This 207-nucleotide RNA was probed chemically with DMS and 2A3. It was measured as part of the RMDB library ARCHII. The RNA was probed in 150 mM KOAc, 10 mM MgCl2 and 150 mM bicine (pH 8.5) at 24 C.

RNA sequence: GGGAACGACUCGAGUAGAGUCGAAAAGUGCAUACCGAGCACGAACAUAACUCGUAAAAUAUUGUUUAAAACAAAUAGUUGCAAAUAAUUACAACUAUAGUUUGGCAGCUUAAUGCCAACCUGUUAUCAUUUGUGACCUACAACAUUUGAUAACGGUACCAUCAUUACAGUUCGCUGUAAUGAUGGUAAAAGAAACAACAACAACAAC
Reactivity to DMS in 0.01 (KOAc 150mM, MgCl2 10mM, bicine 150mM(pH8.5), 24C), signal-to-noise 2, nucleotides 027 to 156: g000u010g020c060a090u000a250c200c050g030a050g020c000a300c040g000a060a270c090a110u010a040a110c040u010c040g000u000a120a080a100a080u010a050u010u000g000u000u000u000a070a070a080a130c060a050a080a040u010a060g000u000u000g040c010a000a080a220u010a140a150u000u000a040c010a000a020c010u010a040u000a100g010u000u010u020g010g000c000a050g030c200u010u000a090a090u020g010c000c010a020a010c040c020u000g010u000u000a050u000c020a030u000u000u000g010u010g010a140c300c080u010a090c030a090a030c000a020u000u010u000g020a020u000a010a010c020g010g010u010
Reactivity to 2A3 in 0.01 (KOAc 150mM, MgCl2 10mM, bicine 150mM(pH8.5), 24C), signal-to-noise 7, nucleotides 027 to 156: g040u030g020c020a060u070a210c060c050g020a020g000c010a000c040g020a080a040c050a060u210a100a060c030u050c100g080u120a030a070a070a070u140a110u070u120g060u020u100u070a080a150a010a020c040a030a170a040u020a000g020u000u010g010c030a020a100a140u150a160a120u300u180a070c000a010a000c000u010a010u010a070g030u000u040u060g000g000c000a010g000c040u130u230a070a020u050g000c000c000a010a010c010c010u030g000u000u000a000u000c000a000u000u000u010g020u020g100a120c060c090u110a080c100a110a000c000a030u000u000u010g000a000u000a000a000c000g000g000u000